[RMDB]
The data come from the RNA Mapping Database (RMDB), library TTRDEL. The record gives the reactivity of an RNA of 177 nucleotides to DMS and 2A3. Conditions: 150 mM KOAc, 10 mM MgCl2 and 150 mM bicine (pH 8.5), 24 C.
RNA sequence: GGGAACGACUCGAGUAGAGUCGAAAAGAUAUGGAUGGAGCCUACUCUCGCUACAUAUCGGAAACGAUAUGAGCGAACGUGAGUAGGCGUUGAAAUCCUAAGUCAAAUCGUGAGUUCGCUCACGAAAGCAUUACUAUUACUUCGGUAAUAGUAAUGCAAAAGAAACAACAACAACAAC
Reactivity to DMS in 0.01 (KOAc 150mM, MgCl2 10mM, bicine 150mM(pH8.5), 24C), signal-to-noise 9, nucleotides 027 to 126: g010a040u000a300u010g000g000a020u000g010g000a160g020c000c000u000a010c000u000c000u000c010g020c010u010a130c010a000u000a000u000c000g010g010a130a100a200c010g010a010u000a000u000g000a060g000c000g010a020a050c240g020u010g000a010g010u000a000g000g010c000g000u000u010g000a090a100a060u000c000c000u010a070a120g010u000c020a080a080a120u000c000g020u000g000a020g010u000u010c290g020c010u000c000a010c000g000a010a070a120
Reactivity to 2A3 in 0.01 (KOAc 150mM, MgCl2 10mM, bicine 150mM(pH8.5), 24C), signal-to-noise 9, nucleotides 027 to 126: g030a020u080a030u150g010g000a010u010g020g030a010g000c000c000u000a000c000u020c010u050c010g020c030u240a300c140a010u010a000u000c000g010g030a080a060a010c010g000a000u000a010u010g000a000g010c020g020a050a020c140g210u160g020a000g000u000a000g000g000c000g010u040u010g000a010a000a000u000c000c000u020a130a020g060u040c040a020a030a150u040c010g000u000g000a010g010u060u220c300g000c060u000c000a000c010g020a070a010a000